[RMDB]
RNA sequence: GGGAACGACUCGAGUAGAGUCGAAAACGACCACUUCCUCUUUGUUGAGCCCCGCGAAGGAGUCGUCCACCAGCCUUUGCAGCACGUGAGGAGGACACUUUAGAAUGUUGUCUGCGUGAGGCUCGAAGGCCACGACGAUAGGUAGCCGAAAGUAAGGCAUGUAGGUGCAUUUCGAUGCACCUACAUGAAAAGAAACAACAACAACAAC
Reactivity to 2A3 in 0.01 (KOAc 150mM, MgCl2 10mM, bicine 150mM(pH8.5), 24C), signal-to-noise 1, nucleotides 027 to 156: c080g070a090c000c000a050c050u060u110c000c060u070c020u030u070u060g230u060u190g060a080g020c000c020c000c020g060c040g000a010a030g010g000a040g020u010c010g020u050c020c040a110c050c020a010g020c000c000u080u120u090g010c050a010g000c020a020c030g040u090g150a040g040g060a020g040g010a020c000a000c030u150u170u100a210g050a250a150u120g070u150u000g030u040c020u010g000c000g020u050g050a040g040g040c000u020c030g010a050a020g000g000c000c000a020c080g040a010c030g000a000u090a080g040g020u060a020g040c030c020g000a030a020a010g160u220a000a110g020g000
Reactivity to DMS in 0.01 (KOAc 150mM, MgCl2 10mM, bicine 150mM(pH8.5), 24C), signal-to-noise 2, nucleotides 027 to 156: c040g020a240c020c000a110c100u000u010c000c000u000c070u030u010u000g030u020u000g010a150g000c000c000c010c030g090c140g020a070a080g020g030a070g000u010c060g020u000c020c020a090c080c060a150g000c010c000u000u000u000g030c000a080g000c030a120c030g030u030g030a220g030g010a090g000g020a040c050a080c030u000u010u030a160g000a170a050u020g030u010u000g010u000c000u020g040c000g030u010g030a100g030g020c010u010c020g020a040a070g030g030c010c020a120c000g000a030c010g010a160u010a110g020g010u010a090g020c030c020g000a080a080a100g000u020a040a130g030g000
Chemical mapping of a 207-nucleotide RNA with 2A3 and DMS.
The RNA was probed in 150 mM KOAc, 10 mM MgCl2 and 150 mM bicine (pH 8.5) at 24 C.
Source: RMDB library OK3TST, as collected in RNAgym.
For 2A3, 717 sequencing reads were counted.
For 2A3 the reverse transcriptase was SuperScript II with manganese.